[RMDB]
This 177-nucleotide RNA was probed chemically with 2A3 and DMS. 2A3 adducts were read by reverse transcription with SuperScript II with manganese. Conditions: 150 mM KOAc, 10 mM MgCl2 and 150 mM bicine (pH 8.5), 24 C. The 2A3 profile rests on 1,726 reads. Source: RMDB library M2PK90, as collected in RNAgym. Reactivities are given for positions 27 through 126.

RNA sequence: GGGAACGACUCGAGUAGAGUCGAAAAGUUGCCCGAGAAGAGAUCACACAGAUGAGACACAAGGAGCGAUGUCUCAUCACUUGGUAUUCGACAAGUGACGAGUCGUUCCCAAAAUCGCUCCAAUGAACACCAGACAAUAAUUCGUUAUUGUCUGGUGAAAAGAAACAACAACAACAAC
Reactivity to 2A3 in 0.01 (KOAc 150mM, MgCl2 10mM, bicine 150mM(pH8.5), 24C), signal-to-noise 1, nucleotides 027 to 126: g050u070u050g070c000c000c000g040a060g020a040a030g140a010g030a080u140c040a010c000a010c020a150g010a020u020g000a010g010a000c000a000c000a090a090g030g000a000g000c000g000a020u010g000u020c010u000c010a020u000c000a000c000u020u000g000g020u100a160u050u020c020g000a000c010a140a140g090u090g210a060c060g000a020g010u020c000g010u010u000c020c000c000a050a000a030a000u000c000g000c020u000c000c000a000a080u210g010a030a000
Reactivity to DMS in 0.01 (KOAc 150mM, MgCl2 10mM, bicine 150mM(pH8.5), 24C), signal-to-noise 5, nucleotides 027 to 126: g010u010u010g020c090c000c030g010a100g010a140a100g010a110g010a080u000c080a100c140a080c160a120g000a020u000g000a010g000a000c010a020c120a070a060g000g010a010g020c010g000a070u000g000u010c000u000c000a020u000c000a060c060u020u000g010g000u000a140u000u000c030g010a020c010a100a090g010u010g020a110c020g010a030g010u000c010g010u010u010c000c010c000a010a010a040a040u000c010g010c010u010c000c010a130a050u010g010a100a160